[RMDB]
RNA sequence: GGGAACGACUCGAGUAGAGUCGAAAAUGGACCGUAUAGUAUCGCGGAUCCUGGUAAAAGUAGCAGAAUAGAAUGGUGAAAAUCCAUUCCGCCGAAAGGGCAAAGGUUCCUUGGCAAUGUUCGUCAGCAAUGGAGAGUAGUUCGCUACUCUCCAUUGAAAAGAAACAACAACAACAAC
Reactivity to 2A3 in 0.01 (KOAc 150mM, MgCl2 10mM, bicine 150mM(pH8.5), 24C), signal-to-noise 3, nucleotides 027 to 126: u060g010g000a000c000c020g050u040a110u040a110g130u050a050u170c120g000c060g040g000a270u020c000c000u010g000g030u120a050a060a030a040g040u110a010g050c050a000g040a130a010u070a050g000a000a000u020g010g010u020g010a040a020a010a030u000c000c000a000u000u000c040c030g000c020c020g110a160a050a030g070g000g010c040a100a090a020g100g000u080u030c000c000u020u000g010g000c050a010a100u090g030u030u070c030g060u030c040a020g050
Reactivity to DMS in 0.01 (KOAc 150mM, MgCl2 10mM, bicine 150mM(pH8.5), 24C), signal-to-noise 5, nucleotides 027 to 126: u000g010g010a050c020c000g030u000a110u010a130g020u010a090u010c140g030c030g000g000a110u000c010c010u000g000g010u010a050a060a090a090g020u000a070g040c060a100g010a060a100u000a080g000a010a010u000g010g000u000g000a060a060a220a150u000c000c000a000u000u000c010c200g010c010c020g020a030a050a110g000g010g010c030a070a050a070g010g000u000u010c000c000u000u000g010g010c040a070a090u000g000u000u000c070g000u010c070a080g010

Source: RMDB library RFMREP, as collected in RNAgym. Structure probing data (2A3 and DMS) for a 177-nucleotide construct. DMS adducts were read by reverse transcription with MarathonRT. Conditions: 150 mM KOAc, 10 mM MgCl2 and 150 mM bicine (pH 8.5), 24 C.